This 177-nucleotide RNA was probed chemically with 2A3 and DMS. The DMS profile rests on 11,357 reads. DMS adducts were read by reverse transcription with MarathonRT. The data come from the RNA Mapping Database (RMDB), library OK1LIB. Values cover nucleotides 27 to 126. For 2A3, 4,762 sequencing reads were counted. In probing experiments dimethyl sulfate is read out at A N1 and C N3, which are open when not base-paired.

[RMDB]
RNA sequence: GGGAACGACUCGAGUAGAGUCGAAAAGAGUAAUGGGCGCACAAGGUGAGAUGAAGCUGUAGUCUCACUGGAAGGACUAGAGGUUAGAGGAGACGCGCCCAAAACAAGUAACAGCUUCAUCAAGAGACAUCGCUAGUAUAUUCGUAUACUAGCGAUGAAAAGAAACAACAACAACAAC
Reactivity to 2A3 in 0.01 (KOAc 150mM, MgCl2 10mM, bicine 150mM(pH8.5), 24C), signal-to-noise 5, nucleotides 027 to 126: g100a010g030u160a140a120u160g000g000g000c010g000c020a040c070a170a040g130g040u170g100a130g010a010u020g010a040a000g030c010u010g010u040a020g020u020c000u000c010a060c050u000g000g020a030a030g100g020a020c030u060a080g020a070g150g100u210u100a020g020a040g070g060a030g010a020c020g020c000g010c000c000c000a000a010a000a000c010a000a010g060u080a040a000c000a010g000c000u020u040c030a040u030c020a030a030g080a000g010a060
Reactivity to DMS in 0.01 (KOAc 150mM, MgCl2 10mM, bicine 150mM(pH8.5), 24C), signal-to-noise 5, nucleotides 027 to 126: g010a120g010u010a080a230u000g000g000g040c000g010c020a150c200a090a110g010g010u020g010a160g010a010u000g010a040a010g010c000u000g020u000a170g010u000c000u000c020a050c030u010g000g000a090a080g000g000a080c070u010a080g010a160g000g010u010u020a080g010a140g000g000a090g010a060c050g020c010g000c030c000c010a010a000a070a040c130a070a090g020u030a090a040c010a000g000c000u010u000c020a010u000c020a110a110g010a170g000a220